The record gives the reactivity of an RNA of 177 nucleotides to 2A3 and DMS. It was measured as part of the RMDB library TTRDEL.
RNA sequence: GGGAACGACUCGAGUAGAGUCGAAAAGAUAUGGAAAAGUGCGUUGAUCUACACGUAACAUCCAUCGGAAACGAUGGUGGUGUAGGGAGCACGAUUCCUAAGUCAAAGAAACGGUUCGCCGUUUCAACAUAUCCGCGUUGUUCGCAACGCGGAUAUGAAAAGAAACAACAACAACAAC
Reactivity to 2A3 in 0.01 (KOAc 150mM, MgCl2 10mM, bicine 150mM(pH8.5), 24C), signal-to-noise 2, nucleotides 027 to 126: g010a020u060a050u090g000g000a000a020a010a010g010u010g000c020g150u200u020g010a010u000c000u000a000c000a000c000g020u050a060a010c030a260u090c000c000a000u000c000g030g000a080a050a030c030g000a000u000g000g020u020g010g020u000g000u010a000g000g010g010a010g000c010a000c010g010a000u000u000c000c000u000a140a010g050u040c060a050a100a100g020a010a010a000c000g000g030u060u130c300g050c100c020g000u000u000u000c000a000a010
Reactivity to DMS in 0.01 (KOAc 150mM, MgCl2 10mM, bicine 150mM(pH8.5), 24C), signal-to-noise 4, nucleotides 027 to 126: g000a040u000a300u010g000g000a000a010a100a300g010u000g020c020g000u000u030g020a030u000c000u010a010c010a000c000g000u000a010a020c180a040u010c010c010a010u000c000g000g000a110a090a180c020g000a010u000g000g030u000g020g000u000g010u000a010g000g000g000a000g020c010a000c000g000a200u000u000c000c000u010a040a140g000u010c060a110a110a080g020a010a010a010c000g020g000u000u020c300g020c020c000g010u000u000u000c000a130a200